Source: RMDB library OK2TST, as collected in RNAgym.
Structure probing data (DMS and 2A3) for a 177-nucleotide construct.
The reactions ran in a buffer of 150 mM KOAc, 10 mM MgCl2 and 150 mM bicine (pH 8.5), at 24 C.
For DMS the reverse transcriptase was MarathonRT.
[RMDB]
RNA sequence: GGGAACGACUCGAGUAGAGUCGAAAACUGAAGAGCAAUGUCACCACAGUCACAAGCACGGUCAGGACGCCCACCAGUGCGGCGGCAAAGGGCCAGUCCAGCGUUUCGCGAAGUUGCUGGGAUAUGAGUAUUACUGGACGUUCGCGUCCAGUAAUACAAAAGAAACAACAACAACAAC
Reactivity to DMS in 0.01 (KOAc 150mM, MgCl2 10mM, bicine 150mM(pH8.5), 24C), signal-to-noise 3, nucleotides 027 to 126: c030u010g030a080a080g000a100g020c070a080a040u010g020u010c040a050c040c010a090c080a030g010u010c070a070c080a080a120g020c060a070c060g000g000u010c060a080g000g000a130c110g000c040c020c040a140c060c060a100g040u010g010c060g020g000c070g000g010c050a070a070a050g000g000g030c050c080a120g000u000c010c020a060g000c030g000u000u010u000c080g030c080g010a020a120g000u000u010g020c010u000g000g000g000a110u010a070u000g020a250
Reactivity to 2A3 in 0.01 (KOAc 150mM, MgCl2 10mM, bicine 150mM(pH8.5), 24C), signal-to-noise 2, nucleotides 027 to 126: c010u030g060a090a030g010a040g060c020a060a150u090g030u060c030a000c050c010a050c010a030g020u070c000a010c020a100a000g000c010a020c040g020g130u120c010a020g040g070a050c040g040c010c030c010a040c010c010a040g030u040g070c050g020g000c000g000g040c010a060a110a110g080g010g000c010c030a010g000u000c000c000a000g010c010g050u060u150u070c130g000c050g000a050a020g090u210u140g010c000u000g010g030g020a040u070a080u230g090a070
For 2A3, 1,423 sequencing reads were counted. 2A3 adducts were read by reverse transcription with SuperScript II with manganese.